[RMDB]
RNA sequence: GGGAACGACUCGAGUAGAGUCGAAAACGCUCAUAGCGACGCUGCUUUUUGAUCCUUCGAUGUCGGCUCUUCUUAUCAUUGUGAAGCAGAAUUCACAAAGUGUUGGAUUGUUCACCCACUAACAAGGCAAUAAGGAGGACUUCGGUCCUCCUUAUUGAAAAGAAACAACAACAACAAC
Reactivity to 2A3 in 0.01 (KOAc 150mM, MgCl2 10mM, bicine 150mM(pH8.5), 24C), signal-to-noise 2, nucleotides 027 to 126: c030g000c040u040c080a140u080a070g050c020g060a090c140g000c050u030g070c030u010u010u030u050u030g050a030u010c000c020u030u020c060g060a050u100g010u020c020g040g000c030u000c020u060u000c020u040u110a050u100c070a090u010u090g020u040g030a020a010g070c220a090g090a210a210u100u000c010a000c000a010a000a040g050u030g010u020u110g070g020a050u020u020g030u110u060c030a070c010c000c000a050c010u040a160a010c060a090a000g150g010
Reactivity to DMS in 0.01 (KOAc 150mM, MgCl2 10mM, bicine 150mM(pH8.5), 24C), signal-to-noise 4, nucleotides 027 to 126: c090g000c020u000c060a120u010a140g010c120g010a060c120g000c060u010g010c090u010u020u000u000u010g010a060u010c010c020u000u000c040g010a080u010g000u000c020g010g000c040u000c010u000u010c060u000u000a080u000c100a110u010u010g020u000g000a030a010g000c060a140g010a130a150u010u010c010a010c020a050a040a090g000u000g020u000u000g010g020a100u000u000g000u000u000c060a080c040c000c040a070c090u010a080a090c190a070a090g000g010
Description:
Structure probing data (2A3 and DMS) for a 177-nucleotide construct. The RNA was probed in 150 mM KOAc, 10 mM MgCl2 and 150 mM bicine (pH 8.5) at 24 C. 2A3 adducts were read by reverse transcription with SuperScript II with manganese. Values cover nucleotides 27 to 126. In probing experiments dimethyl sulfate is read out at A N1 and C N3, which are open when not base-paired.